[RMDB]
RNA sequence: GGGAACGACUCGAGUAGAGUCGAAAAAUGCGACGCUCCGGCGGCAUGAGCGUCUCUCGGAAGAGCAGAAAACCGCGAUUGAGCGCAUCGCCGGUCCAGCCCGGAUCGCCGCCGUGGUUGGACGUGCACCACCGGACCCGUUCGCGGGUCCGGUGGUAAAAGAAACAACAACAACAAC
Reactivity to 2A3 in 0.01 (KOAc 150mM, MgCl2 10mM, bicine 150mM(pH8.5), 24C), signal-to-noise 1, nucleotides 027 to 126: a000u170g060c040g000a000c000g000c000u000c010c000g000g000c000g000g030c150a160u150g000a000g060c070g010u040c000u000c000u000c000g080g270a180a010g030a030g170c250a020g040a100a110a000a000c000c000g000c030g000a010u030u210g070a110g000c000g030c010a010u000c000g000c040c110g080g000u000c090c090a090g000c000c000c020g000g070a130u110c000g000c010c000g000c000c000g010u110g000g000u000u000g000g090a090c160g000u280g080c060
About this RNA: An RNA of 177 nucleotides, treated with 2A3 and read out base by base. 2A3 adducts were read by reverse transcription with SuperScript II with manganese. The data come from the RNA Mapping Database (RMDB), library OK1LIB.